[RMDB]
RNA sequence: GGGAACGACUCGAGUAGAGUCGAAAAACACUGAUGGCAGCCGGCCAACUGUCAAUCAAAGUGCCACGUCAUCAUUGACGUCAUGGCGCAGCACGCUACGCGCUGACGUCAGCGCGGGGGCGGCCGGAACCUGAUAAUAAUUCGUUAUUAUCAGGUUAAAAGAAACAACAACAACAAC
Reactivity to 2A3 in 0.01 (KOAc 150mM, MgCl2 10mM, bicine 150mM(pH8.5), 24C), signal-to-noise 5, nucleotides 027 to 126: a010c060a020c050u060g010a020u020g010g000c010a010g030c020c050g050g020c020c000a050a060c020u020g010u000c000a080a150u040c030a100a140a060g030u020g020c010c000a010c000g020u000c000a070u020c030a050u070u210g010a000c010g010u080c060a120u100g010g000c010g000c000a000g060c030a010c090g040c020u120a030c020g000c000g000c000u020g080a300c260g300u300c030a000g000c000g000c000g000g000g050g000g010c020g000g000c000c020g010g010
Reactivity to DMS in 0.01 (KOAc 150mM, MgCl2 10mM, bicine 150mM(pH8.5), 24C), signal-to-noise 7, nucleotides 027 to 126: a120c070a090c150u010g010a040u000g000g010c010a040g010c010c030g010g010c030c030a110a230c020u000g010u000c010a070a100u010c080a060a110a100g010u000g000c000c020a100c020g000u000c010a040u000c240a150u010u010g000a020c030g010u010c140a070u000g000g000c010g010c020a100g010c100a100c110g000c060u000a080c040g000c000g000c000u000g000a300c300g000u010c000a020g000c000g000c000g000g000g000g000g000c200g010g000c010c060g010g010